[RMDB]
RNA sequence: GGGAACGACUCGAGUAGAGUCGAAAAACGAUGUCGUUCGCGACAUCGUAAAUUGUUUAACCUUGCUUGAAGUCUACUUGGUUGUAAAGCGAGACAAGUCAGUGAGAGUCCUAUUCGUAGGACUCAAUAAUGUUAUGGAAUUCGUUCCAUAACAUUAAAAAGAAACAACAACAACAAC
Reactivity to 2A3 in 0.01 (KOAc 150mM, MgCl2 10mM, bicine 150mM(pH8.5), 24C), signal-to-noise 8, nucleotides 027 to 126: a000c000g000a000u010g000u000c010g010u040u060c190g010c010g090a000c010a000u000c000g000u000a010a010a010u070u050g070u030u100u080a050a050c010c000u010u020g000c010u020u030g050a080a020g030u040c010u030a100c080u260u200g100g010u100u050g080u110a030a020a010g020c030g020a000g010a020c040a080a040g080u130c060a030g030u030g200a140g000a000g050u000c000c000u010a020u020u070c200g040u030a000g000g000a000c000u000c000a000a000
Reactivity to DMS in 0.01 (KOAc 150mM, MgCl2 10mM, bicine 150mM(pH8.5), 24C), signal-to-noise 9, nucleotides 027 to 126: a030c000g000a010u000g010u000c000g020u000u010c220g020c010g010a010c000a000u000c000g010u000a010a050a090u000u000g010u000u000u010a110a140c090c020u000u000g010c010u000u000g000a090a140g010u000c010u000a070c070u010u000g010g010u000u000g010u010a070a020a030g000c080g000a040g000a150c060a040a070g000u000c090a070g010u010g000a180g000a020g000u000c000c000u000a020u000u010c180g020u000a000g000g000a010c000u000c000a020a060